This 177-nucleotide RNA was probed chemically with DMS and 2A3. DMS adducts were read by reverse transcription with MarathonRT. Values cover nucleotides 27 to 126. The DMS profile rests on 4,187 reads.

[RMDB]
RNA sequence: GGGAACGACUCGAGUAGAGUCGAAAAGAGAAGCACUGUUACGACUUGUUACGUGACUGUGAUGCUGUAGCUCCCCAUGAUUUCUUCAUCUUUGAUGUAGACAAAGUUAAAACACCUCAUAUUGUACGUUAUUUUUAAUCUUCGGAUUAAAAAUAACAAAAGAAACAACAACAACAAC
Reactivity to DMS in 0.01 (KOAc 150mM, MgCl2 10mM, bicine 150mM(pH8.5), 24C), signal-to-noise 4, nucleotides 027 to 126: g000a090g010a130a060g010c010a040c010u000g010u010u000a020c010g010a140c120u010u000g000u010u010a110c010g010u010g000a020c000u010g000u000g010a050u000g010c010u000g010u010a110g020c130u010c030c000c010c130a120u010g000a100u000u000u010c020u000u000c030a030u000c010u000u000u010g010a030u000g010u010a050g010a090c240a040a060a080g000u010u000a050a060a090a100c120a070c070c030u000c100a050u000a100u000u000g010u010a070c150
Reactivity to 2A3 in 0.01 (KOAc 150mM, MgCl2 10mM, bicine 150mM(pH8.5), 24C), signal-to-noise 5, nucleotides 027 to 126: g060a000g010a060a010g010c010a010c020u010g000u000u020a000c010g010a030c040u150u170g090u270u170a050c020g000u000g010a000c020u020g030u040g060a080u050g010c010u050g040u090a050g030c020u020c000c030c010c000a040u080g050a120u080u090u040c020u040u030c020a020u000c040u050u090u270g030a020u030g020u040a000g010a020c040a050a100a030g030u130u130a090a170a040a010c040a040c010c020u070c040a060u120a060u170u110g040u050a050c060